An RNA of 177 nucleotides, treated with 2A3 and DMS and read out base by base. 2A3 adducts were read by reverse transcription with SuperScript II with manganese. It was measured as part of the RMDB library OK2TST. The DMS profile rests on 7,693 reads. The RNA was probed in 150 mM KOAc, 10 mM MgCl2 and 150 mM bicine (pH 8.5) at 24 C.

[RMDB]
RNA sequence: GGGAACGACUCGAGUAGAGUCGAAAAGCUGCUCCUGGGGCUGCUCCUCUGGGCCAGGAGGAGACGCGCCUGGGACCCCCGCAAGUGUCCCACCGACCUGACUGGCAAGACGGUGAUUGUCACCGGAGAAAUAGUCGUUAUUCGUAACGACUAUUUCAAAAGAAACAACAACAACAAC
Reactivity to 2A3 in 0.01 (KOAc 150mM, MgCl2 10mM, bicine 150mM(pH8.5), 24C), signal-to-noise 4, nucleotides 027 to 126: g030c030u100g030c070u010c010c000u000g000g000g030g000c010u030g020c000u010c000c000u020c020u040g030g150g060c050c040a050g010g000a000g000g010a010g010a010c040g070c050g140c010c010u000g000g000g000a020c010c000c000c000c030g060c070a140a040g050u040g040u080c000c010c000a020c020c030g050a060c000c020u070g110a160c020u030g020g000c030a030a030g070a030c000g020g010u000g040a170u110u210g180u290c010a000c000c030g020g020a110
Reactivity to DMS in 0.01 (KOAc 150mM, MgCl2 10mM, bicine 150mM(pH8.5), 24C), signal-to-noise 5, nucleotides 027 to 126: g010c110u010g010c140u010c000c000u000g010g010g000g020c010u000g010c010u000c000c000u000c000u000g010g010g000c100c110a210g000g000a030g000g000a030g000a040c070g000c030g010c020c010u000g010g020g000a070c020c020c030c020c070g030c160a080a070g010u010g010u000c010c010c000a120c150c080g000a090c070c040u010g000a070c090u000g000g000c060a100a120g010a120c010g000g000u000g010a250u000u010g000u010c010a040c000c010g010g000a230